This 207-nucleotide RNA was probed chemically with 2A3.

RNA sequence: GGGAACGACUCGAGUAGAGUCGAAAAGAAUAAGCAUGCAUAUAAAGAUUAUGCAUGCGGGAUAGAGAUAGACAACGUCAAUGACAUAAGAAAGAUAGAAAUUUCGAGAGAGGAAUGGGAAGAUCUGAGCUGGAAGUGCUUCUAUCGGUCCUUGAGACUCCAUCACGUCAUUCGUGACGUGAUGGAGAAAAGAAACAACAACAACAAC
Reactivity to 2A3 in 0.01 (KOAc 150mM, MgCl2 10mM, bicine 150mM(pH8.5), 24C), signal-to-noise 1, nucleotides 027 to 156: g040a030a110u250a100a000g000c000a000u010g040c010a000u090a000u060a020a300a010g040a210u130u060a000u000g000c000a000u000g000c000g010g020g010a070u110a070g060a020g010a040u020a030g120a040c030a070a000c100g070u060c030a020a130u070g000a010c000a040u170a050a000g010a060a040a010g020a060u060a050g110a050a080a060u090u190u070c110g030a050g010a000g000a000g080g050a070a030u080g010g060g000a050a000g010a080u020c030u050g000a000g010c000u020g000g010a050a070g010u010g080c000u000u060c000u020a050u030c000g010g000u010c020c000u060u050g050a020g110a020